[RMDB]
RNA sequence: GGGAACGACUCGAGUAGAGUCGAAAAUUGCCAUGUUGACCAGGCUGUUCUUGAACUGCUAACCUCAGGUGAUCCACCCACCUUGGCCUCCCGAAGUGCUGGGAUUAAGGCAUGAGCCACUGCACCCCAGUUUAUAGAGAUUCGUCUCUAUAAACUGAAAAGAAACAACAACAACAAC
Reactivity to 2A3 in 0.01 (KOAc 150mM, MgCl2 10mM, bicine 150mM(pH8.5), 24C), signal-to-noise 4, nucleotides 027 to 126: u060u050g030c020c010a050u090g040u050u070g100a120c040c040a040g050g000c030u040g050u060u050c030u070u120g060a080a050c030u060g020c030u060a050a070c010c020u040c020a010g010g030u030g020a030u020c030c000a040c030c000c000a020c030c000u010u040g050g000c000c000u010c000c010c010g020a080a030g070u050g030c050u060g010g020g040a060u100u140a060a030g030g000c030a060u110g040a010g010c000c010a040c040u050g000c030a080c010c000c000
Reactivity to DMS in 0.01 (KOAc 150mM, MgCl2 10mM, bicine 150mM(pH8.5), 24C), signal-to-noise 9, nucleotides 027 to 126: u010u010g020c010c020a090u010g010u010u000g010a100c060c040a100g000g010c030u000g010u000u000c040u010u000g010a060a090c060u000g010c040u000a080a110c080c040u000c070a050g000g020u000g000a060u000c040c040a090c050c030c030a040c050c030u000u000g010g010c040c040u000c010c010c010g000a060a060g020u010g010c040u000g000g000g000a100u010u010a070a060g000g010c030a070u000g000a080g010c020c020a070c070u000g010c070a120c020c030c030
Notes:
Conditions: 150 mM KOAc, 10 mM MgCl2 and 150 mM bicine (pH 8.5), 24 C. The record gives the reactivity of an RNA of 177 nucleotides to 2A3 and DMS. Values are in units of 0.01, from 0 to 300, in steps of 10. The DMS profile rests on 32,959 reads. For 2A3 the reverse transcriptase was SuperScript II with manganese. DMS adducts were read by reverse transcription with MarathonRT. It was measured as part of the RMDB library OK2TRN.